[RMDB]
RNA sequence: GGGAACGACUCGAGUAGAGUCGAAAAUGGAAAAGUUUAACAAAAACUUGUGAAGGAAGAUGAAUGCUUUGAUUAUGCAUGAAUCCAUAAUGAUAAAGUGCUAUUGAAUGAUCAAGUAAUUUGUAAGACGCAUAUACAGUUUCGACUGUAUAUGCGUAAAAGAAACAACAACAACAAC
Reactivity to 2A3 in 0.01 (KOAc 150mM, MgCl2 10mM, bicine 150mM(pH8.5), 24C), signal-to-noise 5, nucleotides 027 to 126: u120g050g020a040a030a050a040g030u070u070u100a090a030c050a020a050a020a010a010c010u010u030g020u030g060a030a030g080g010a040a060g040a040u090g050a080a050u110g000c000u030u010u010g020a010u000u070a010u060g010c050a030u100g100a070a000u050c040c010a030u070a080a050u120g050a010u040a060a020a010g060u060g010c010u040a030u130u120g040a100a070u060g000a020u020c010a010a000g020u030a080a240u020u010u020g030u020a040a030g080
Reactivity to DMS in 0.01 (KOAc 150mM, MgCl2 10mM, bicine 150mM(pH8.5), 24C), signal-to-noise 7, nucleotides 027 to 126: u020g030g000a080a080a100a060g000u010u000u010a110a080c090a030a040a030a150a020c010u000u000g000u010g010a220a050g000g000a130a100g000a060u000g000a080a040u020g000c020u000u010u000g000a050u000u010a020u010g000c100a100u010g010a170a080u020c260c060a030u010a060a040u010g010a100u030a010a040a060g010u000g000c080u020a070u010u010g010a210a090u010g000a090u000c010a010a020g000u010a060a100u010u000u000g000u010a090a140g000

About this RNA
This 177-nucleotide RNA was probed chemically with 2A3 and DMS. The RNA was probed in 150 mM KOAc, 10 mM MgCl2 and 150 mM bicine (pH 8.5) at 24 C. DMS adducts were read by reverse transcription with MarathonRT.